[RMDB]
RNA sequence: GGGAACGACUCGAGUAGAGUCGAAAAGAUAUGGAGUGAUCUAAGCAGUCUCGAAGAACUCGGAAACGAGGGAGAGACUGACCCUUAUCUCACUCCUAAGUCAAAGCACAGCCUUCGGGCUGUGCAACCUUAACCGGACGUUCGCGUCCGGUUAAGGAAAAGAAACAACAACAACAAC
Reactivity to DMS in 0.01 (KOAc 150mM, MgCl2 10mM, bicine 150mM(pH8.5), 24C), signal-to-noise 1, nucleotides 027 to 126: g010a050u000a300u000g000g000a050g050u020g000a000u000c140u000a010a000g000c000a000g000u000c000u000c000g000a080a150g000a070a200c000u000c000g050g000a060a150a150c010g000a030g000g000g010a030g010a000g000a000c000u000g000a070c180c220c020u000u000a000u000c270u000c000a050c000u000c000c020u000a040a120g050u000c020a070a130a160g000c000a000c000a030g010c000c000u000u000c190g010g000g060c000u000g010u000g000c000a010a000